[RMDB]
RNA sequence: GGGAACGACUCGAGUAGAGUCGAAAACUAAUGGAGCUACUUGCUGACGAUCGAGUGUUGGCGGCCCUGGAAAGUGUUUACAACUCGGAUCUCAGACAGAUUUUAGCCGAGUAUUUAUAGACUACCAAUCCUACUGAGGGUUCGCCCUCAGUAGGAUAAAAGAAACAACAACAACAAC
Reactivity to 2A3 in 0.01 (KOAc 150mM, MgCl2 10mM, bicine 150mM(pH8.5), 24C), signal-to-noise 4, nucleotides 027 to 126: c060u120a080a080u190g100g000a060g020c020u060a060c030u210u220g030c020u060g020a030c060g040a060u100c020g040a050g040u100g040u130u130g060g020c000g030g010c000c000c000u020g070g000a110a100a080g050u050g000u040u080u090a060c090a090a010c010u000c000g070g030a090u020c010u000c040a040g050a300c070a050g170a090u100u130u030u210a000g010c010c000g010a000g030u020a100u030u100u040a060u050a060g040a050c010u060a070c050c030a000
Reactivity to DMS in 0.01 (KOAc 150mM, MgCl2 10mM, bicine 150mM(pH8.5), 24C), signal-to-noise 3, nucleotides 027 to 126: c020u000a090a130u020g030g000a070g020c020u020a030c080u020u000g000c010u000g000a020c130g010a060u030c100g000a090g000u020g010u010u010g000g030c090g010g000c030c010c000u020g000g020a130a060a050g020u020g000u020u000u030a050c130a040a050c010u010c000g030g020a060u020c060u020c070a070g000a150c160a070g020a090u000u030u030u050a090g000c000c000g000a120g000u000a010u010u040u040a120u020a050g010a080c020u000a090c050c050a210
Structure probing data (2A3 and DMS) for a 177-nucleotide construct. 2A3 is a SHAPE reagent: it acylates the 2'-hydroxyl of flexible nucleotides of all four kinds. For 2A3, 1,716 sequencing reads were counted. Values cover nucleotides 27 to 126. The DMS profile rests on 3,467 reads. Source: RMDB library OK1LIB, as collected in RNAgym. Conditions: 150 mM KOAc, 10 mM MgCl2 and 150 mM bicine (pH 8.5), 24 C.